[RMDB]
RNA sequence: GGGAACGACUCGAGUAGAGUCGAAAACAGUUCUCCAAGACGGACGGAGCUUUCGAGUUUCGUGCUACGGCACGUCUCUCGGAGAGCCAAGACAAAUCCAAGUCAAAAACCAACAAACCAAAUAAAUCGUUUUCAACCGGUUCGCCGGUUGAAAACGAAAAGAAACAACAACAACAAC
Reactivity to 2A3 in 0.01 (KOAc 150mM, MgCl2 10mM, bicine 150mM(pH8.5), 24C), signal-to-noise 1, nucleotides 027 to 126: c030a020g000u000u000c040u010c070c110a110a040g020a230c170g000g000a000c000g000g000a120g000c000u000u000u000c000g000a000g000u000u000u000c000g000u000g000c000u000a070c180g120g000c000a000c000g000u000c000u000c000u000c000g010g010a200g080a050g010c000c000a030a000g090a000c070a000a090a000u000c000c030a110a010g110u180c070a000a110a000a000a210c060c000a150a000c060a230a300a080c010c000a070a030a000u120a090a120a040u100